[RMDB]
RNA sequence: GGGAACGACUCGAGUAGAGUCGAAAAACAUAUUAGUAUCUGUUAAAGGGUCGCCGUCUACUCUCAUCGUUCUUUUGUGUACAAAUUUUUUAAAGGAGCGAUGUUGAUGGCAUUAUGGUUCUUUAGUUAGUCUGAUCCUAUUCGUAGGAUCAGACUAAAAAGAAACAACAACAACAAC
Reactivity to 2A3 in 0.01 (KOAc 150mM, MgCl2 10mM, bicine 150mM(pH8.5), 24C), signal-to-noise 3, nucleotides 027 to 126: a000c040a050u140a020u170u250a010g110u100a140u070c020u040g090u000u140a040a110a110g010g000g000u030c010g010c010c000g010u020c050u110a080c030u040c060u080c080a000u000c000g020u000u000c000u000u000u010u010g080u020g030u000a000c010a000a130a120u090u140u050u120u210u270a070a000a000g020g000a000g000c030g000a000u000g000u050u040g020a040u010g030g000c020a000u120u000a050u240g040g020u030u000c000u020u040u010a110g100u040